Chemical mapping of a 207-nucleotide RNA with 2A3. For 2A3, 479 sequencing reads were counted. The RNA was probed in 150 mM KOAc, 10 mM MgCl2 and 150 mM bicine (pH 8.5) at 24 C. It was measured as part of the RMDB library VIROID.

RNA sequence: GGGAACGACUCGAGUAGAGUCGAAAAUCUUACUCUUUUCUGUAAAGAGGAGACUGCUGGUCCCGCCCCCCAAGCCCGAGCAUGAGCCAAUGUCACGAGCGAAGAGUUCGCAGGGGGAAGGAUCAGCUCCCGAGAGUGGAAAAUGGUAAAGAGUGGGCUAACGAAUGAGGUUCGCCUCAUUCGUUAGAAAAGAAACAACAACAACAAC
Reactivity to 2A3 in 0.01 (KOAc 150mM, MgCl2 10mM, bicine 150mM(pH8.5), 24C), signal-to-noise 1, nucleotides 027 to 156: u000c020u020u130a300c010u000c000u010u010u030u120c080u150g270u240a000a010a000g020a030g020g010a020g040a070c120u060g010c000u000g020g000u000c030c030c010g060c000c010c000c010c010c010a020a030g030c060c090c050g040a030g000c030a080u080g040a030g050c010c090a130a100u080g050u270c110a050c200g060a100g010c000g060a150a080g020a040g110u080u070c020g000c050a050g040g000g000g000g010a020a020g010g000a010u010c000a000g030c000u000c000c000c010g050a030g000a010g000u180g030g010a090a000a080a100u200g060g010u100a080a040a020g070a010g020u060g000g040g030